[RMDB]
RNA sequence: GGGAACGACUCGAGUAGAGUCGAAAACUCAUGCAAAGGGCAAAAUGCCAAGACUUAUGUGUUCUUGGGCUGGAAGAGUGCAAUUAUAGUCCCUUUCAAAAUGAAGUAAAUUAUCUAAAAGCACACCUACGUUCGACUAUUUCGAUAGUCGAACGUAAAAAGAAACAACAACAACAAC
Reactivity to 2A3 in 0.01 (KOAc 150mM, MgCl2 10mM, bicine 150mM(pH8.5), 24C), signal-to-noise 1, nucleotides 027 to 126: c000u000c010a030u020g070c090a000a050a000g020g000g000c030a100a060a070a070u100g020c000c000a000a020g000a000c020u140u180a090u300g150u040g070u130u020c000u000u020g070g030g040c020u000g010g050a120a050g140a030g000u050g000c010a010a040u030u140a110u050a120g070u160c000c000c000u020u030u000c080a100a090a000a010u120g010a060a020g060u200a050a160a220u160u090a170u110c080u150a130a160a000a000g050c000a000c000a000c010c000
Reactivity to DMS in 0.01 (KOAc 150mM, MgCl2 10mM, bicine 150mM(pH8.5), 24C), signal-to-noise 1, nucleotides 027 to 126: c010u000c000a080u000g010c150a040a020a050g040g010g020c040a160a170a070a190u020g000c040c000a020a020g000a060c010u000u030a070u000g030u000g010u010u000c040u000u040g020g030g000c050u040g010g020a240a030g000a200g000u000g000c120a200a140u010u000a070u010a120g000u000c010c030c000u000u000u000c010a100a070a110a070u020g020a050a080g010u060a120a060a100u000u000a040u000c090u000a030a010a040a120g000c030a020c060a110c080c080